RNA sequence: GGGAACGACUCGAGUAGAGUCGAAAAGAUAUGGAGUAGAACUACACGACGAGGUUAUCGGAAACGAUAACUACCCACCGAGAACGUGCUACUCCUAAGUCAAAACACCGCAGUUCGCUGCGGUGAAGAAUACUCAACGCUUCGGCGUUGAGUAUUCAAAAGAAACAACAACAACAAC
Reactivity to DMS in 0.01 (KOAc 150mM, MgCl2 10mM, bicine 150mM(pH8.5), 24C), signal-to-noise 1, nucleotides 027 to 126: g010a050u000a170u000g000g000a010g020u000a000g040a020a010c080u000a300c040a050c000g000a140c160g040a210g010g040u000u000a000u000c000g020g010a000a070a160c000g000a000u000a000a000c050u000a120c110c010c040a070c250c090g040a090g000a160a230c110g010u000g020c010u000a000c000u010c000c010u020a010a050g000u000c010a040a060a140a150c020a000c000c000g010c000a010g000u000u050c230g000c000u000g000c000g020g000u000g010a050a060
Reactivity to 2A3 in 0.01 (KOAc 150mM, MgCl2 10mM, bicine 150mM(pH8.5), 24C), signal-to-noise 1, nucleotides 027 to 126: g020a000u010a000u060g000g010a000g030u050a000g000a080a020c080u220a080c300a010c060g300a030c170g030a070g170g000u070u010a000u020c000g000g000a000a040a000c000g000a010u000a050a000c000u070a050c000c000c050a150c010c140g210a180g060a300a170c030g000u010g020c000u000a000c000u020c010c000u020a000a010g000u010c000a000a000a040a220c000a000c000c000g000c010a000g000u040u140c300g030c120u010g010c010g010g060u000g000a000a000

Chemical mapping of a 177-nucleotide RNA with DMS and 2A3. Values are in units of 0.01, from 0 to 300, in steps of 10. The 2A3 profile rests on 1,422 reads. The reactions ran in a buffer of 150 mM KOAc, 10 mM MgCl2 and 150 mM bicine (pH 8.5), at 24 C. DMS adducts were read by reverse transcription with MarathonRT. The data come from the RNA Mapping Database (RMDB), library TTRDEL.